RNA sequence: GGGAACGACUCGAGUAGAGUCGAAAAGAGCUUGCCGACGGUGAUGAUCACCUUCUGCGCCAUCAGGCCGUAGGUGACCUCGGCAAUGCCCAUCAGCGCGGCGUUGAUGUCCGGGUAGACGUGGGUGCAAUCAUAGUGUUUUCGAACACUAUGAUUGAAAAGAAACAACAACAACAAC
Reactivity to DMS in 0.01 (KOAc 150mM, MgCl2 10mM, bicine 150mM(pH8.5), 24C), signal-to-noise 9, nucleotides 027 to 126: g010a100g010c090u000u000g010c000c000g010a040c220g020g010u000g010a120u010g010a150u010c010a010c010c000u000u000c020u010g060c180g030c010c010a140u020c290a130g010g020c000c010g000u000a010g010g010u000g000a020c010c010u000c010g010g010c010a010a010u010g010c010c010c010a060u000c070a150g010c030g010c050g010g000c050g010u010u000g000a100u010g000u000c020c020g010g000g020u000a080g010a090c150g010u000g000g010g020u000g010
Reactivity to 2A3 in 0.01 (KOAc 150mM, MgCl2 10mM, bicine 150mM(pH8.5), 24C), signal-to-noise 9, nucleotides 027 to 126: g050a020g050c030u020u010g000c010c000g030a060c170g000g070u140g090a300u150g030a060u140c010a010c010c000u020u020c090u140g100c110g010c020c010a190u300c160a130g030g000c010c000g000u010a000g000g010u010g020a010c000c000u000c000g000g000c000a000a010u030g000c000c010c000a040u060c040a030g030c090g010c020g120g000c050g050u080u170g120a130u130g070u030c020c010g050g020g020u060a060g020a090c050g020u050g010g020g020u060g020